[RMDB]
RNA sequence: GGGAACGACUCGAGUAGAGUCGAAAAGACUACAACUUCGGUUGUAGUCAAAUAAAAGCGUGUUCCGACUUCACGGAACAAGUACACGCUUGAAGUAUAAAAAAACCGGUUCCUUCGGGAACCGGAACGUUAUCGUUUAGUUCGCUAAACGAUAACGAAAAGAAACAACAACAACAAC
Reactivity to 2A3 in 0.01 (KOAc 150mM, MgCl2 10mM, bicine 150mM(pH8.5), 24C), signal-to-noise 3, nucleotides 027 to 126: g000a000c000u000a010c000a010a010c000u080u100c190g130g000u010u000g000u010a010g010u000c000a000a000a000u010a000a050a010a000g000c000g000u000g030u010u000c020c010g050a110c080u240u200c200a060c160g010g030a060a000c030a010a010g020u000a030c010a000c080g010c000u020u020g030a070a040g100u130a080u250a230a230a040a020a010a020a040c000c010g020g020u000u000c010c010u020u040c220g040g020g000a000a010c000c010g000g010a000a000
Reactivity to DMS in 0.01 (KOAc 150mM, MgCl2 10mM, bicine 150mM(pH8.5), 24C), signal-to-noise 2, nucleotides 027 to 126: g010a020c000u010a010c000a010a000c000u000u020c190g020g000u000u010g010u010a000g010u000c010a010a060a060u000a020a050a030a010g000c000g020u000g010u010u000c000c030g030a240c300u000u000c230a110c100g000g000a020a050c070a100a110g010u000a070c080a080c020g000c000u010u010g000a070a150g010u010a050u020a020a000a120a090a040a080a120c000c020g000g000u000u000c000c000u000u000c210g020g010g010a000a000c000c000g000g010a010a040
Structure probing data (2A3 and DMS) for a 177-nucleotide construct.
It was measured as part of the RMDB library M2PK50.
For DMS, 1,942 sequencing reads were counted.